[RMDB]
RNA sequence: GGGAACGACUCGAGUAGAGUCGAAAAUCGAAGCGGUGGUAACGGUGGAGGGCAGCAAGGCGGAUCCUCUGAUGGUCGGUGAGCUCGUUGUCCGGGAUCCGGGAUGGGACGAGGAAGGGCGCCUUUCACCACUCAGCAGGUUCGCCUGCUGAGUGGUAAAAGAAACAACAACAACAAC
Reactivity to DMS in 0.01 (KOAc 150mM, MgCl2 10mM, bicine 150mM(pH8.5), 24C), signal-to-noise 1, nucleotides 027 to 126: u020c090g030a020a110g010c050g000g000u010g010g000u010a100a060c140g000g000u010g000g000a120g000g010g020c020a100g010c060a060a060g000g010c030g000g000a050u030c040c070u000c060u000g000a130u020g030g040u030c140g030g000u000g000a210g000c030u000c070g050u000u010g000u000c060c150g000g000g000a050u020c030c000g010g000g000a070u010g010g030g000a090c030g000a160g000g000a060a080g000g020g020c080g000c030c040u000u000u020c100
Reactivity to 2A3 in 0.01 (KOAc 150mM, MgCl2 10mM, bicine 150mM(pH8.5), 24C), signal-to-noise 1, nucleotides 027 to 126: u130c000g040a090a050g000c010g000g140u090g040g000u140a090a060c010g000g040u130g040g020a050g000g020g020c010a020g000c030a130a060g100g030c040g050g000a030u030c000c010u130c050u030g060a070u090g000g050u140c000g000g040u060g080a030g070c000u000c030g000u030u030g040u040c050c000g000g000g000a030u050c000c000g010g000g010a120u150g020g000g020a020c020g000a070g000g010a020a050g000g020g030c040g030c010c020u030u010u000c030
The record gives the reactivity of an RNA of 177 nucleotides to DMS and 2A3. DMS adducts were read by reverse transcription with MarathonRT. Source: RMDB library OK1LIB, as collected in RNAgym. For 2A3 the reverse transcriptase was SuperScript II with manganese. The reactions ran in a buffer of 150 mM KOAc, 10 mM MgCl2 and 150 mM bicine (pH 8.5), at 24 C. For 2A3, 780 sequencing reads were counted.